This 177-nucleotide RNA was probed chemically with 2A3 and DMS.
In probing experiments dimethyl sulfate is read out at A N1 and C N3, which are open when not base-paired.
Conditions: 150 mM KOAc, 10 mM MgCl2 and 150 mM bicine (pH 8.5), 24 C.
[RMDB]
RNA sequence: GGGAACGACUCGAGUAGAGUCGAAAAGGUCGUAGACCCGAAACCAUGUGAUCUACCCAUGUCCAGGUUGAAGGUGCGGUAAAACGCACUGGAGGACCGAACCCACGUACGUUGAAAAGUGCGGGGAAUGAUGAUAACAUUUCGAUGUUAUCAUCAUAAAAGAAACAACAACAACAAC
Reactivity to 2A3 in 0.01 (KOAc 150mM, MgCl2 10mM, bicine 150mM(pH8.5), 24C), signal-to-noise 8, nucleotides 027 to 126: g020g000u050c030g060u060a030g050a130c000c020c020g050a070a030a030c040c040a070u090g070u080g080a120u010c020u060a070c010c030c020a050u100g050u020c040c070a040g010g000u010u030g020a030a010g000g000u000g000c000g000g000u000a020a030a010a010c000g000c000a000c000u010g000g020a040g040g100a010c000c000g020a030a060c000c000c020a180c030g010u010a000c010g030u030u160g140a150a170a040a040g010u010g000c010g010g000g000g010a110
Reactivity to DMS in 0.01 (KOAc 150mM, MgCl2 10mM, bicine 150mM(pH8.5), 24C), signal-to-noise 9, nucleotides 027 to 126: g010g010u000c080g020u000a060g020a050c010c010c020g010a130a090a140c160c090a050u010g020u010g010a070u000c040u000a090c030c020c020a100u000g010u000c050c050a130g010g010u000u000g000a300a170g000g000u000g010c000g000g000u000a080a050a120a170c010g010c000a000c000u000g000g000a260g000g000a010c010c030g010a090a140c030c000c000a080c040g020u000a010c020g010u000u010g000a110a080a100a150g010u000g000c000g010g000g000g010a220